[RMDB]
RNA sequence: GGGAACGACUCGAGUAGAGUCGAAAAAGUUGAUUUUGGCUCAUUCAGACUUGCCAGGAGAGUGCUCCAUGAUUAUAUACCCUGUGCAGUACUCUUGAUGUCAGAGAACAGGAGAAAACUCACAACACUCAAUAAAGGCUGAAUAUUUGCAACUCUACAACCGAUACCAGUUCGCUGGUAUCGGUUGAAAAGAAACAACAACAACAAC
Reactivity to 2A3 in 0.01 (KOAc 150mM, MgCl2 10mM, bicine 150mM(pH8.5), 24C), signal-to-noise 1, nucleotides 027 to 156: a000g040u060u050g050a230u020u090u070u110g030g020c000u000c090a060u050u060c000a010g060a060c000u020u080g020c060c080a030g030g040a140g000a000g000u010g020c010u050c070c080a130u120g040a070u180u130a040u040a000u060a150c060c010c000u010g050u000g030c130a080g040u040a180c000u000c000u000u130g040a130u130g140u080c050a000g020a020g010a060a040c010a020g040g000a030g020a050a120a040a010c060u070c020a050c000a070a070c020a030c050u050c000a030a020u020a130a070a010g020g000c050u000g000a040a000u020a110u120u120u130g000c000a020a070c010u050c000u050a050
Source: RMDB library OK3TST, as collected in RNAgym. Structure probing data (2A3) for a 207-nucleotide construct. The reactions ran in a buffer of 150 mM KOAc, 10 mM MgCl2 and 150 mM bicine (pH 8.5), at 24 C. For 2A3 the reverse transcriptase was SuperScript II with manganese.